About this RNA
This 177-nucleotide RNA was probed chemically with 2A3 and DMS. For 2A3 the reverse transcriptase was SuperScript II with manganese. DMS (dimethyl sulfate) methylates the pairing face of unpaired adenines and cytosines.
RNA sequence: GGGAACGACUCGAGUAGAGUCGAAAAGAUAUGGAGUCCUGACCCGCUGUAUUGAGUCGGAAACGACUUGUACAACAAGGCGCAGGACUCCUAAGUCAAAACUAAUGUCUCUUCGGAGACAUUAGAAGUCAGAGUUAUUGUUCGCAAUAACUCUGACAAAAGAAACAACAACAACAAC
Reactivity to 2A3 in 0.01 (KOAc 150mM, MgCl2 10mM, bicine 150mM(pH8.5), 24C), signal-to-noise 3, nucleotides 027 to 126: g010a000u020a010u060g010g000a000g010u000c010c010u050g130a250c120c140c100g020c090u040g000u020a010u120u300g040a010g010u000c010g000g020a020a010a000c000g000a000c000u010u000g000u010a000c010a300a080c110a300a300g090g000c110g080c040a000g000g020a000c000u000c000c000u000a000a010g000u000c020a060a010a060a150c000u000a010a010u000g000u000c000u000c000u010u080c230g190g010a010g000a010c000a000u000u000a000g000a050a000
Reactivity to DMS in 0.01 (KOAc 150mM, MgCl2 10mM, bicine 150mM(pH8.5), 24C), signal-to-noise 3, nucleotides 027 to 126: g010a010u010a300u010g000g020a020g010u010c000c000u000g030a300c140c150c080g020c100u010g000u000a020u000u000g020a020g030u010c000g000g010a080a060a110c000g030a020c000u010u000g010u000a030c010a120a100c120a120a080g010g000c070g030c030a010g000g010a010c010u000c000c000u010a000a090g000u000c010a130a120a090a280c000u000a000a010u010g010u000c000u000c010u010u010c180g020g000a020g010a010c000a000u000u000a030g000a100a090